[RMDB]
RNA sequence: GGGAACGACUCGAGUAGAGUCGAAAAGUGCGCUUUGAGGUAACGCCAUUGGAUUUGGGCAUUCAGAUGCGUAGUUUGGUGUACGAGGCGCAUGCUACGGUGAUUAUGGUCUCGGCGACAUUGAGUAAGACUACUAGACUUUCGAGUCUAGUAGUCUAAAAGAAACAACAACAACAAC
Reactivity to 2A3 in 0.01 (KOAc 150mM, MgCl2 10mM, bicine 150mM(pH8.5), 24C), signal-to-noise 4, nucleotides 027 to 126: g040u020g000c020g000c000u060u040u130g120a080g130g020u100a090a020c020g020c030c020a020u070u140g090g070a160u130u070u140g070g040g000c060a030u120u110c070a090g030a230u070g050c050g100u050a070g050u040u050u060g030g000u010g030u040a030c040g000a030g000g020c020g000c010a010u070g000c000u040a020c040g050g000u050g070a090u060u180a070u150g060g000u000c000u000c050g050g020c030g010a020c070a100u040u120g000a040g080u030a060
Reactivity to DMS in 0.01 (KOAc 150mM, MgCl2 10mM, bicine 150mM(pH8.5), 24C), signal-to-noise 6, nucleotides 027 to 126: g020u000g010c000g010c010u000u000u000g020a110g000g010u010a080a090c080g010c020c010a080u010u000g010g010a140u010u010u000g020g010g020c070a060u010u010c140a090g010a060u000g010c030g020u000a050g000u000u000u010g010g020u000g000u010a110c050g000a050g000g000c000g000c000a020u000g010c070u000a060c090g010g010u000g010a090u000u010a060u000g000g000u000c030u000c040g010g010c050g000a060c120a100u010u000g000a090g010u000a080

Structure probing data (2A3 and DMS) for a 177-nucleotide construct. Values cover nucleotides 27 to 126. DMS (dimethyl sulfate) methylates the pairing face of unpaired adenines and cytosines. For 2A3, 4,448 sequencing reads were counted. Values are in units of 0.01, from 0 to 300, in steps of 10. DMS adducts were read by reverse transcription with MarathonRT. Source: RMDB library OK2TST, as collected in RNAgym. For 2A3 the reverse transcriptase was SuperScript II with manganese.